[RMDB]
RNA sequence: GGGAACGACUCGAGUAGAGUCGAAAACUCAUGUCUAGAGAGCGAGUACUGUGAUCUAUGGUACAGUACACGAGUACGCUAGUGUCUAGGAUCUGUCGCAGUACGAUCGUACGGUACCAUCUAGGACGCAAUGCUGAGUGUUCGCACUCAGCAUUGCAAAAGAAACAACAACAACAAC
Reactivity to 2A3 in 0.01 (KOAc 150mM, MgCl2 10mM, bicine 150mM(pH8.5), 24C), signal-to-noise 1, nucleotides 027 to 126: c030u070c020a060u100g070u020c010u060a050g000a010g000a000g120c000g000a010g050u000a020c000u030g020u030g060a090u100c050u140a080u270g030g020u040a020c000a010g000u060a000c000a030c030g010a030g020u010a050c100g000c110u040a080g030u010g010u060c050u090a100g110g090a070u010c030u100g050u060c020g000c000a020g030u000a020c040g030a050u020c020g000u010a020c060g000g080u050a130c000c010a020u000c020u040a050g010g100a060c050
Reactivity to DMS in 0.01 (KOAc 150mM, MgCl2 10mM, bicine 150mM(pH8.5), 24C), signal-to-noise 1, nucleotides 027 to 126: c050u010c030a090u010g060u010c000u030a120g030a060g000a160g010c010g030a110g040u000a020c050u030g040u000g000a060u020c120u000a060u000g000g020u010a040c020a070g020u000a010c000a030c160g000a140g000u000a050c090g020c080u000a030g010u000g000u000c070u000a150g000g000a070u000c020u010g020u010c070g030c010a060g020u010a020c030g000a130u000c020g000u000a000c040g000g010u000a050c120c050a070u000c090u020a080g010g000a060c070